Structure probing data (2A3) for a 207-nucleotide construct.
RNA sequence: GGGAACGACUCGAGUAGAGUCGAAAAGAGGUGUUCGCACCUCGAGACGGGGUCACCGGUUUGGCAAACUACCCACCGAACUACGACUGAAGCCUCCACGGUCGCGAGGUUUGCUAAUUUGGUGACGGAGGCACCCUUUUGGCUCCUUCGGGAGCAAAGUAAUUGGAACGUUCGCGUUCCAAUUACUAAAAGAAACAACAACAACAAC
Reactivity to 2A3 in 0.01 (KOAc 150mM, MgCl2 10mM, bicine 150mM(pH8.5), 24C), signal-to-noise 1, nucleotides 027 to 156: g000a000g040g000u070g040u130u140c270g050c110a000c000c000u030c000g010a020g000a020c140g000g060g000g000u000c000a010c000c020g090g030u010u040u140g080g000c040a060a070a070c060u190a140c110c030c000a070c090c070g040a120a090c060u110a060c240g020a000c020u010g040a090a000g000c020c000u000c010c010a060c020g000g000u000c020g000c130g080a070g080g070u050u000u200g000c020u010a030a140u150u110u300g050g000u010g000a030c000g010g000a000g020g000c000a030c000c010c020u070u020u120u290g100g000c000u000c000c000u000u050c140g040g000g020a000g000c020a080a000